[RMDB]
RNA sequence: GGGAACGACUCGAGUAGAGUCGAAAACCCAGGAAGCCCCCACUGGCCGGCGCCCAUGCCAGCUCUCUUCUGGCCAGGACGCAGCUGCUGCGCACUUCGCGCGGGGGCCCACGGCAGGCAGCACAACCCAAUACUGCUCAUUCGUGAGCAGUAUUGGAAAAGAAACAACAACAACAAC
Reactivity to DMS in 0.01 (KOAc 150mM, MgCl2 10mM, bicine 150mM(pH8.5), 24C), signal-to-noise 1, nucleotides 027 to 126: c000c010c010a000g000g000a300a300g080c080c010c000c000c010a080c100u000g010g050c090c100g000g000c130g000c140c000c030a110u000g010c010c090a000g000c120u010c220u030c120u080u000c000u000g020g000c000c100a140g000g060a120c030g000c050a160g000c020u000g000c140u010g010c090g000c000a140c200u020u050c300g000c020g010c000g000g010g000g010g000c000c030c030a010c260g010g060c070a030g000g000c010a030g000c010a020c070a210a170c050
Reactivity to 2A3 in 0.01 (KOAc 150mM, MgCl2 10mM, bicine 150mM(pH8.5), 24C), signal-to-noise 3, nucleotides 027 to 126: c000c000c000a000g030g030a050a010g010c020c000c000c010c000a040c060u070g030g020c040c020g070g000c020g000c000c030c000a080u080g030c020c000a040g030c030u040c020u030c020u300u030c010u030g000g000c000c020a010g000g010a010c030g030c020a070g020c010u070g000c020u050g000c030g020c030a070c100u210u210c150g000c000g010c000g020g000g020g000g000c010c010c000a020c000g050g000c000a010g020g050c000a020g040c000a020c000a030a060c030